[RMDB]
RNA sequence: GGGAACGACUCGAGUAGAGUCGAAAACUAGAUUGAGAACAGACACAGCAGGUGUCUCAACAUCACUGUGGUAGAGACAAGCAGUCACUCAGUGACGAAGAUGACACGCAGCAGAGUGAUGUGUCUUAUCUGAGUGUUCUGGACGGUCAUGCUCGCAGUGACAGGGUCUAUUCGUAGACCCUGUCACAAAAGAAACAACAACAACAAC
Reactivity to 2A3 in 0.01 (KOAc 150mM, MgCl2 10mM, bicine 150mM(pH8.5), 24C), signal-to-noise 1, nucleotides 027 to 156: c090u110a140g040a300u140u240g020a020g070a030a020c080a060g070a000c010a030c040a030g210c070a100g000g190u080g000u020c020u000c050a080a130c040a080u050c040a010c020u000g010u050g020g000u050a010g070a000g030a110c020a090a170g000c060a050g010u000c000a000c000u000c000a000g000u020g060a100c110g050a100a000g140a030u140g030a000c000a010c040g000c010a010g100c110a020g070a040g120u100g030a150u070g020u000g050u020c020u070u080a120u000c000u000g010a000g090u010g090u080u100c030u010g010g140a040c050g060g020u030c000a050u000g000c020u060c040g060c000a040